[RMDB]
RNA sequence: GGGAACGACUCGAGUAGAGUCGAAAAACGAGUGAGUUACGACUCACUCGACUUUUAAUGCUACCCAAAGGUCGUGACAAGGCGAUAAAACGCAGAGUCAAAAAGUCCGACGUUACGACGUCGGACAACGAGCGAGUUCUGUUCGCAGAACUCGCAACACUUCAUCGUAGUUCGCUACGAUGAAGUGAAAAGAAACAACAACAACAAC
Reactivity to 2A3 in 0.01 (KOAc 150mM, MgCl2 10mM, bicine 150mM(pH8.5), 24C), signal-to-noise 2, nucleotides 027 to 156: a000c030g000a010g010u000g000a000g010u030u070a090c230g040a020c090u000c000a000c000u000c000g000a010c000u040u050u040u190a110a060u160g050c060u070a060c010c000c000a060a050a000g080g020u100c040g050u050g010a030c030a060a040g090g000c020g030a050u140a200a060a010a020c020g000c020a020g020a030g160u080c060a010a090a000a020a050g000u000c000c000g000a000c000g000u030u050a090c300g010a010c000g050u000c000g010g010a010c000a000a010c020g040a020g000c000g000a000g000u000u000c000u000g040u040u080c160g000c070a000g000a000a000c000u000c000g000c000a000a000
Reactivity to DMS in 0.01 (KOAc 150mM, MgCl2 10mM, bicine 150mM(pH8.5), 24C), signal-to-noise 2, nucleotides 027 to 156: a060c010g040a030g010u000g010a020g000u000u000a130c240g040a210c000u020c000a010c010u010c010g020a010c090u090u000u000u000a010a010u010g010c030u000a120c010c020c040a070a120a090g020g020u020c010g030u000g010a200c060a100a120g080g030c010g040a170u000a030a080a150a220c030g000c040a110g000a270g040u000c020a060a090a080a020a160g000u010c010c000g030a040c000g010u000u000a080c210g010a150c000g000u000c000g000g040a010c020a020a030c140g000a200g020c010g000a040g010u000u000c000u000g020u010u000c280g030c010a010g010a010a000c000u000c000g010c010a000a040
The data come from the RNA Mapping Database (RMDB), library M2RFPK. The record gives the reactivity of an RNA of 207 nucleotides to 2A3 and DMS. For 2A3 the reverse transcriptase was SuperScript II with manganese.